[RMDB]
RNA sequence: GGGAACGACUCGAGUAGAGUCGAAAAAGCCGCAGGGCGUUCUCCGGGGCGCGGCCCGAGACCGUCGCGUCGUAGACAGCCAGGAGACCCGGGAGCAGAUUCACCGCAGCGGCCGUCUCCCUCAAGGUCUCUACGUCUCAUUCGUGAGACGUAGAGAAAAAGAAACAACAACAACAAC
Reactivity to DMS in 0.01 (KOAc 150mM, MgCl2 10mM, bicine 150mM(pH8.5), 24C), signal-to-noise 2, nucleotides 027 to 126: a160g000c010c050g000c000a230g000g010g030c040g020u000u000c010u000c070c030g000g010g020g000c000g000c110g030g000c020c020c130g000a030g000a100c000c200g020u030c140g000c080g000u000c020g030u000a110g030a050c300a050g090c020c000a220g050g040a140g000a090c000c020c040g000g000g000a090g030c030a080g040a160u020u010c090a080c010c000g000c160a100g000c000g000g000c040c000g050u020c070u000c000c000c000u030c160a030a100g030g000
Reactivity to 2A3 in 0.01 (KOAc 150mM, MgCl2 10mM, bicine 150mM(pH8.5), 24C), signal-to-noise 3, nucleotides 027 to 126: a000g000c000c020g000c040a020g010g010g010c010g020u040u010c060u020c000c030g010g020g000g050c000g010c040g020g000c020c120c000g050a040g040a080c030c090g160u140c060g010c080g040u010c000g000u020a080g020a130c060a000g050c050c010a080g050g050a080g110a110c000c000c000g000g040g000a010g000c020a000g020a110u130u280c080a030c100c040g140c140a040g010c000g000g000c000c000g010u020c000u000c000c000c000u050c050a030a020g070g010

Chemical mapping of a 177-nucleotide RNA with DMS and 2A3. Source: RMDB library RFM100, as collected in RNAgym. For 2A3 the reverse transcriptase was SuperScript II with manganese. Conditions: 150 mM KOAc, 10 mM MgCl2 and 150 mM bicine (pH 8.5), 24 C. Values cover nucleotides 27 to 126. For DMS the reverse transcriptase was MarathonRT.